[RMDB]
RNA sequence: GGGAACGACUCGAGUAGAGUCGAAAAGAUAUGGAACAAGGCUCCGAAGAACUAUGGAACUACUCGGAAACGAGCCAUAGGGAGGAGUCUUGUUCCUAAGUCAAAUCUACCGGUUCGCCGGUAGAAAGUUGCAUAAUCAGUUCGCUGAUUAUGCAACAAAAGAAACAACAACAACAAC
Reactivity to 2A3 in 0.01 (KOAc 150mM, MgCl2 10mM, bicine 150mM(pH8.5), 24C), signal-to-noise 1, nucleotides 027 to 126: g000a000u000a000u060g000g010a000a000c000a030a000g010g000c000u000c020c000g180a230a030g010a030a000c000u020a000u010g030g040a050a120c120u300a200c030u290c030g010g000a000a000a030c000g010a020g080c000c000a000u000a000g000g010g010a010g000g000a000g010u000c000u000u000g010u000u000c000c000u010a000a010g000u000c000a000a000a000u010c010u010a020c000c010g000g080u010u030c300g050c030c000g010g000u000a000g010a000a000a000
Reactivity to DMS in 0.01 (KOAc 150mM, MgCl2 10mM, bicine 150mM(pH8.5), 24C), signal-to-noise 2, nucleotides 027 to 126: g000a030u000a150u000g000g010a010a020c000a020a000g020g000c000u000c000c010g050a120a140g080a240a170c000u000a000u000g010g050a230a110c300u020a280c030u000c010g000g010a030a010a010c010g000a020g000c000c000a000u000a000g030g000g000a050g020g010a000g000u000c000u010u000g000u010u000c000c000u000a000a040g020u000c010a040a190a160u000c000u000a000c000c000g000g010u000u000c290g040c000c000g000g010u000a000g010a020a040a100
An RNA of 177 nucleotides, treated with 2A3 and DMS and read out base by base. The reactions ran in a buffer of 150 mM KOAc, 10 mM MgCl2 and 150 mM bicine (pH 8.5), at 24 C. For DMS the reverse transcriptase was MarathonRT. For 2A3 the reverse transcriptase was SuperScript II with manganese. For DMS, 1,471 sequencing reads were counted.